[RMDB]
RNA sequence: GGGAACGACUCGAGUAGAGUCGAAAAGAUAUGGACCAAAGCAAGAUAUCAUUAAUAGAUUUCGUUUGCUCGGAAACGAGCAAACGAAAUUAGUAUUAAUAGUAUUGAUGACCUUUGGUCCUAAGUCCAAUACAAUUAUCUUCGGAUAAUUGUAUUGAAAAGAAACAACAACAACAAC
Reactivity to 2A3 in 0.01 (KOAc 150mM, MgCl2 10mM, bicine 150mM(pH8.5), 24C), signal-to-noise 2, nucleotides 027 to 126: g030a070u160a060u300g000g010a000c000c000a000a000a020g040c040a110a280g000a070u030a010u100c000a010u000u080a010a040u040a040g110a060u010u040u010c000g010u000u000u110g020c120u060c100g180g130a070a160a160c030g000a020g050c060a000a010a010c000g020a020a000a000u000u000a010g000u010a000u060u000a010a030u080a120g010u000a030u070u060g150a210u150g040a120c020c000u000u000u000g000g010u000c000c000u000a010a010g000u030c010
Reactivity to DMS in 0.01 (KOAc 150mM, MgCl2 10mM, bicine 150mM(pH8.5), 24C), signal-to-noise 3, nucleotides 027 to 126: g000a090u010a300u000g010g010a030c000c000a000a010a010g000c010a070a110g000a020u000a000u000c020a010u010u000a000a000u010a100g000a050u000u000u000c010g010u000u000u000g010c010u000c000g030g000a060a120a250c020g040a080g040c010a000a000a010c010g010a020a000a010u000u000a200g000u000a010u000u010a000a010u000a090g000u010a010u000u000g000a120u000g010a100c300c010u000u000u010g000g000u000c000c000u000a010a100g010u000c040